[RMDB]
RNA sequence: GGGAACGACUCGAGUAGAGUCGAAAACCAUCUUGCGCACGAUUGGCUCUAAGAAGGCGGCAAAGAGUAGCGCUACAAUAAUCGGAAUAAAGACAGAAGAGAGAAAGUGCAAGGUGUAGGCAACGGCCACCCACGGAUUGUUCGCAAUCCGUGGGUGAAAAGAAACAACAACAACAAC
Reactivity to DMS in 0.01 (KOAc 150mM, MgCl2 10mM, bicine 150mM(pH8.5), 24C), signal-to-noise 1, nucleotides 027 to 126: c050c000a020u010c160u000u010g000c010g020c040a100c020g010a110u000u000g000g000c000u000c040u060a080a150g000a060a090g060g000c100g030g010c110a020a040a060g060a110g000u000a070g010c010g040c030u000a070c300a080a070u000a070a030u030c040g010g010a190a100u000a040a070a050g000a100c130a020g010a070a040g000a050g000a110g000a060a100a070g000u000g000c070a060a000g000g010u000g000u000a040g000g000c010a190a070c070g010g020c140
Reactivity to 2A3 in 0.01 (KOAc 150mM, MgCl2 10mM, bicine 150mM(pH8.5), 24C), signal-to-noise 1, nucleotides 027 to 126: c010c000a020u000c090u080u030g010c020g000c010a050c100g000a080u110u080g070g000c000u000c010u030a070a270g080a080a060g190g000c030g060g080c070a090a100a030g040a040g040u100a040g090c040g000c020u050a020c040a010a110u210a160a040u040c020g090g030a030a080u090a160a190a000g050a040c090a000g050a120a000g030a020g010a020g010a080a040a020g000u010g000c020a040a020g050g010u060g040u030a040g000g010c030a040a010c060g080g030c010

The record gives the reactivity of an RNA of 177 nucleotides to DMS and 2A3. The RNA was probed in 150 mM KOAc, 10 mM MgCl2 and 150 mM bicine (pH 8.5) at 24 C. For DMS the reverse transcriptase was MarathonRT.